Conditions: 150 mM KOAc, 10 mM MgCl2 and 150 mM bicine (pH 8.5), 24 C. An RNA of 177 nucleotides, treated with 2A3 and read out base by base. For 2A3, 332 sequencing reads were counted. Source: RMDB library RFM100, as collected in RNAgym.
[RMDB]
RNA sequence: GGGAACGACUCGAGUAGAGUCGAAAAACAAGCAUGUUUUCAAAUGGCGCUACGAGCUGCCAAUGAUGUAUCACCACCGUAUCUCAUUAUUCUCCACUAAAUGUGUUAGUAAUGUGAUCUGUUAACAAAUGAUCGAGCCUUUCGAGGCUCGAUCAUUAAAAGAAACAACAACAACAAC
Reactivity to 2A3 in 0.01 (KOAc 150mM, MgCl2 10mM, bicine 150mM(pH8.5), 24C), signal-to-noise 1, nucleotides 027 to 126: a000c000a000a120g070c040a030u000g020u180u050u150u120c060a030a040a020u060g000g000c000g000c000u000a020c190g150a000g030c010u030g000c100c000a000a020u140g090a110u060g020u000a000u180c000a000c000c000a000c000c000g000u070a030u000c000u000c060a000u000u010a000u070u120c050u070c000c080a020c000u190a080a170a210u300g000u000g000u000u000a100g000u000a010a010u010g010u070g000a000u000c080u040g040u000u100a140a000c000a000